[RMDB]
RNA sequence: GGGAACGACUCGAGUAGAGUCGAAAAUUAUUCAUCAUUGUCAAGGAAAUAACAUAAGUAGAUGUAUAAGAACAAGUGAAAAGGCUAUUAUGUUAGAAGGAGGGGUCACUAUGUAUAGUCUACAUGACCUCAUUAACUCCUUCGGGAGUUAAUGAGGAAAAGAAACAACAACAACAAC
Reactivity to 2A3 in 0.01 (KOAc 150mM, MgCl2 10mM, bicine 150mM(pH8.5), 24C), signal-to-noise 1, nucleotides 027 to 126: u050u010a070u000u080c010a030u010c040a000u160u030g080u000c060a070a010g070g090a110a070a130u150a060a020c040a000u040a070a050g070u050a060g030a050u050g080u090a080u060a160a090g060a020a010c050a020a130g110u020g200a030a070a070a070g060g000c010u000a010u100u070a000u120g070u040u030a040g040a040a020g020g090a070g000g050g000g030u040c000a000c020u020a030u050g000u000a030u050a010g100u050c010u010a040c020a030u070g040a010
Reactivity to DMS in 0.01 (KOAc 150mM, MgCl2 10mM, bicine 150mM(pH8.5), 24C), signal-to-noise 1, nucleotides 027 to 126: u000u000a040u010u010c040a030u010c040a090u000u000g010u010c040a070a080g050g000a070a160a060u000a030a040c040a020u000a010a090g000u000a040g010a020u000g000u010a080u000a070a080g020a120a060c130a070a090g000u000g010a020a050a090a060g010g000c030u000a060u020u010a000u010g000u030u000a020g040a140a130g020g040a120g020g010g010g010u000c040a050c100u000a020u000g030u000a020u000a170g020u020c130u000a030c050a060u010g010a090

The record gives the reactivity of an RNA of 177 nucleotides to 2A3 and DMS.
For 2A3, 693 sequencing reads were counted.
For DMS the reverse transcriptase was MarathonRT.
High DMS reactivity at an A or C suggests that its Watson-Crick edge is free.
Values are in units of 0.01, from 0 to 300, in steps of 10.